[RMDB]
RNA sequence: GGGAACGACUCGAGUAGAGUCGAAAAGAGUGUCCUUGCGCGUGGAUCCGAGCGACCAUGGUGGCCCGGGUGUGGUCGCUGAUGAGCGAGCCCUUGGCGUUCAGUUCGCGGUGUCAGCCUCCGCCUCCGAGCCUCAGUUGUCUUCUCUGUGAGGUGACACCUCCUCAGUAUUCGUACUGAGGAGGUGAAAAGAAACAACAACAACAAC
Reactivity to 2A3 in 0.01 (KOAc 150mM, MgCl2 10mM, bicine 150mM(pH8.5), 24C), signal-to-noise 1, nucleotides 027 to 156: g160a050g020u110g010u020c020c000u020u050g010c080g000c000g040u100g000g070a160u050c090c060g030a020g030c100g040a020c000c030a050u070g020g110u030g050g030c050c020c040g000g030g000u070g010u030g000g000u000c000g000c000u000g010a000u020g000a000g000c000g000a020g020c030c000c040u080u200g160g020c130g070u130u150c010a000g000u020u030c000g000c020g140g140u190g010u030c000a000g020c030c000u000c000c000g000c000c000u010c000c000g000a010g000c000c020u060c010a010g010u020u000g030u000c050u080u010c070u050c060u140g080u050g010a010g010g010u040g050a000